RNA sequence: GGGAACGACUCGAGUAGAGUCGAAAAGAUAUGGAAAUCGUAUUGUUCGUUUGACGACUAUCGGAAACGAUAGUCCGAGAACUGUACGAGUUUCCUAAGUCAAAAGCCGAUACUUCGGUAUCGGCAAGUCCAUAUGGAUGUUCGCAUCCAUAUGGACAAAAGAAACAACAACAACAAC
Reactivity to 2A3 in 0.01 (KOAc 150mM, MgCl2 10mM, bicine 150mM(pH8.5), 24C), signal-to-noise 2, nucleotides 027 to 126: g010a010u080a020u120g010g020a010a030a030u020c000g000u020a010u000u100g030u000u030c020g030u090u190u300g070a040c040g000a000c010u000a000u000c010g040g020a100a030a030c010g010a000u020a000g000u000c020c010g010a010g020a010a010c010u010g000u010a000c000g010a000g040u000u030u020c000c000u020a200a000g050u030c040a030a030a190a150g000c000c000g000a000u000a010c030u020u210c300g120g000u010a000u000c000g000g010c000a000a000
Reactivity to DMS in 0.01 (KOAc 150mM, MgCl2 10mM, bicine 150mM(pH8.5), 24C), signal-to-noise 3, nucleotides 027 to 126: g000a050u000a300u000g000g010a010a030a050u000c000g020u000a000u000u000g020u000u000c010g030u000u000u010g010a210c300g000a000c000u000a010u000c000g010g000a110a060a200c010g000a010u000a010g000u000c000c000g000a070g000a000a000c000u000g030u000a000c010g010a030g010u000u000u000c000c000u000a060a190g010u010c060a120a110a230a190g010c000c010g000a000u000a010c000u010u030c210g010g000u000a000u000c000g000g000c000a000a020